[RMDB]
Chemical mapping of a 177-nucleotide RNA with DMS and 2A3.
RNA sequence: GGGAACGACUCGAGUAGAGUCGAAAAGAGCGUCGAGAGACGAAGAGAAGUGCAUAGAUCCACAACGGAGAACGUAAUAAUGCACACCUGUGGGUUAGUGUCCGGAACAACGGGCACAAGAGGCAGAAUUAAUCCGUCGUUUCGACGACGGAUUAAUAAAAGAAACAACAACAACAAC
Reactivity to DMS in 0.01 (KOAc 150mM, MgCl2 10mM, bicine 150mM(pH8.5), 24C), signal-to-noise 5, nucleotides 027 to 126: g000a110g000c010g020u000c010g000a210g020a190g010a020c000g000a070a070g000a110g000a120a070g010u000g000c010a030u010a090g000a120u010c010c040a090c200a090a040c150g000g000a100g000a110a100c090g010u010a090a120u020a110a020u000g000c020a020c020a160c190c020u010g010u000g000g000g000u000u010a130g000u000g030u010c000c000g000g000a110a130c300a110a150c000g000g010g000c000a000c020a020a060g000a050g000g020c050a010g000a170
Reactivity to 2A3 in 0.01 (KOAc 150mM, MgCl2 10mM, bicine 150mM(pH8.5), 24C), signal-to-noise 4, nucleotides 027 to 126: g080a020g040c000g020u030c010g000a000g010a020g000a060c060g020a120a000g080a020g040a250a010g000u000g040c000a030u020a080g110a100u000c000c020a040c060a220a080c130g020g030a110g040a090a020c050g020u050a000a090u100a090a030u110g030c020a010c010a030c000c010u020g000u030g040g000g000u010u090a040g000u010g000u000c000c000g080g000a110a070c060a070a060c040g000g030g000c010a000c010a010a010g030a020g030g060c040a010g020a090
About this RNA:
2A3 adducts were read by reverse transcription with SuperScript II with manganese. Source: RMDB library OK1LIB, as collected in RNAgym. For DMS, 7,842 sequencing reads were counted. For 2A3, 3,681 sequencing reads were counted. For DMS the reverse transcriptase was MarathonRT.